Chemical mapping of a 177-nucleotide RNA with 2A3. Reactivities are given for positions 27 through 126. The reactions ran in a buffer of 150 mM KOAc, 10 mM MgCl2 and 150 mM bicine (pH 8.5), at 24 C.
RNA sequence: GGGAACGACUCGAGUAGAGUCGAAAAUUAUGUGCAUACUUGCGCAGGUGGCAUAUGUUCCCACGUGCGAACAAAUUUGUGUGUGUACAUAUACAUAUGCUUUUGUAUGUAAUCGUAUGCACAUGUGUGCGGUAGGGACCUUCGGGUCCCUACCGCAAAAAGAAACAACAACAACAAC
Reactivity to 2A3 in 0.01 (KOAc 150mM, MgCl2 10mM, bicine 150mM(pH8.5), 24C), signal-to-noise 1, nucleotides 027 to 126: u140u060a000u000g020u070g080c000a050u000a220c040u080u080g010c050g040c010a000g090g000u000g110g000c050a000u010a000u090g010u030u060c070c070c000a000c010g040u000g090c100g030a220a140c040a210a100a100u120u290u180g010u000g000u020g030u040g040u070a160c010a010u190a000u000a100c050a000u020a000u070g020c020u030u030u140u190g160u000a150u010g020u070a040a040u140c040g000u000a000u000g000c000a000c040a000u000g080u000g020